[RMDB]
RNA sequence: GGGAACGACUCGAGUAGAGUCGAAAACGUCCCAAGAUGGGGUGGAGAGAGCGGCAUGAAAGAGAGAGAGAGAGAGAGACACGCCUGAAUGGCAGCAGCAGGCCUUAGCGGCAAUGGACAGCAGGCAACAGACCAAUUUUUUCGAAAAUUGGUCUGUAAAAGAAACAACAACAACAAC
Reactivity to DMS in 0.01 (KOAc 150mM, MgCl2 10mM, bicine 150mM(pH8.5), 24C), signal-to-noise 5, nucleotides 027 to 126: c260g020u020c000c000c000a110a080g020a120u000g010g010g000g020u000g000g010a100g010a070g020a060g010c110g000g000c090a050u010g000a080a060a060g000a110g000a100g010a060g000a060g000a050g020a080g000a070g010a090g000a050c110a100c150g000c030c000u000g000a060a070u030g000g010c030a080g010c060a060g020c090a060g000g000c020c030u020u030a110g000c080g010g000c030a050a070u010g010g010a050c060a060g000c030a040g010g000c070a130
Reactivity to 2A3 in 0.01 (KOAc 150mM, MgCl2 10mM, bicine 150mM(pH8.5), 24C), signal-to-noise 2, nucleotides 027 to 126: c060g100u030c000c000c000a000a020g100a100u150g010g000g000g020u020g030g020a070g010a020g000a000g050c030g040g000c040a070u100g070a070a100a010g070a040g020a010g010a000g000a010g010a000g000a000g000a000g000a000g020a010c020a030c070g040c000c010u050g070a090a080u100g020g000c030a020g010c010a000g010c010a000g080g000c000c010u060u100a050g020c040g040g000c020a030a070u070g030g010a010c000a010g040c020a020g060g000c000a020
The record gives the reactivity of an RNA of 177 nucleotides to DMS and 2A3.
The RNA was probed in 150 mM KOAc, 10 mM MgCl2 and 150 mM bicine (pH 8.5) at 24 C.
Values cover nucleotides 27 to 126.